[RMDB]
An RNA of 207 nucleotides, treated with 2A3 and DMS and read out base by base.
Reactivities are given for positions 27 through 156.
DMS adducts were read by reverse transcription with MarathonRT.
RNA sequence: GGGAACGACUCGAGUAGAGUCGAAAAGCGUACUACAAAGCUGAUUGGGAGCUUCACCAGAGCUUCCCAAAUAGGAAGCUCUGUUGAAGCUUUGAUCAAUCAGAACUACUUUGUAUCGCAAAAGUUUCUAUCACUCCUUCGGGAGUGAUAGAAACAACUAACUUUAAGUCUUCGGACUUAAAGUUAGAAAAGAAACAACAACAACAAC
Reactivity to 2A3 in 0.01 (KOAc 150mM, MgCl2 10mM, bicine 150mM(pH8.5), 24C), signal-to-noise 3, nucleotides 027 to 156: g000c000g040u100a090c010u020a010c070a000a000a010g010c000u010g010a000u000u000g050g020g010a000g030c000u030u050c010a040c000c070a010g000a000g010c000u040u030c020c020c040a130a300a090u300a140g000g000a000a010g110c130u110c020u010g000u100u100g000a030a010g000c050u010u000u010g000a010u010c010a010a000u010c060a070g010a030a010c040u160a020c020u130u010u020g020u020a020u300c030g000c010a000a000a030a140g000u010u000u000c000u010a000u000c010a000c000u010c000c000u040u110c240g060g000g000a000g000u000g000a000u000a000g000a010a000a010c000a000a000
Reactivity to DMS in 0.01 (KOAc 150mM, MgCl2 10mM, bicine 150mM(pH8.5), 24C), signal-to-noise 1, nucleotides 027 to 156: g000c000g050u020a020c100u010a030c000a000a010a010g010c010u010g020a030u000u010g010g000g000a050g000c010u000u010c010a050c060c050a060g000a030g000c000u000u010c010c000c010a060a150a180u010a060g010g010a060a020g030c010u000c000u000g000u000u000g000a060a060g010c000u000u000u010g010a180u000c030a020a030u010c020a120g040a130a240c060u000a130c010u000u000u000g000u010a040u010c020g030c010a150a090a120a220g020u000u000u000c000u000a000u000c000a010c010u010c000c000u000u010c300g060g020g020a030g000u010g020a020u000a010g000a010a010a010c000a050a110